Structure probing data (2A3 and DMS) for a 177-nucleotide construct. Conditions: 150 mM KOAc, 10 mM MgCl2 and 150 mM bicine (pH 8.5), 24 C.
[RMDB]
RNA sequence: GGGAACGACUCGAGUAGAGUCGAAAAGAUAUGGAUUCACAAAUCGAUAAGAUCUUGUCGGAAACGACAGGGAUCUUUUGACGAUUAAUGUGAAUCCUAAGUCAAAACGCCUUGUUCGCAAGGCGAAGCAUAUACUUCUCUUCGGAGAAGUAUAUGCAAAAGAAACAACAACAACAAC
Reactivity to 2A3 in 0.01 (KOAc 150mM, MgCl2 10mM, bicine 150mM(pH8.5), 24C), signal-to-noise 8, nucleotides 027 to 126: g030a000u070a020u150g000g000a000u010u010c000a000c000a010a160a010u020c050g080a100u050a230a010g010a010u000c000u010u020g010u010c000g030g020a070a070a070c010g010a000c010a040g080g090g020a010u000c000u020u080u030u110g200a070c050g000a000u020u120a210a120u110g000u000g000a000a000u000c000c000u000a050a010g040u020c030a020a030a100a150c020g000c000c000u020u020g040u080u110c300g010c190a000a000g000g000c010g010a040a010
Reactivity to DMS in 0.01 (KOAc 150mM, MgCl2 10mM, bicine 150mM(pH8.5), 24C), signal-to-noise 7, nucleotides 027 to 126: g020a030u010a300u000g000g000a010u000u000c000a000c010a030a070a020u000c000g020a160u010a020a010g010a010u000c000u000u000g020u000c000g020g000a130a110a190c010g010a010c000a020g000g010g000a010u000c000u000u000u000u000g010a230c150g000a020u000u000a090a090u010g020u000g010a010a000u000c000c000u000a020a090g000u000c030a080a070a160a210c030g010c010c000u000u000g010u000u010c200g020c010a010a010g000g010c000g010a030a090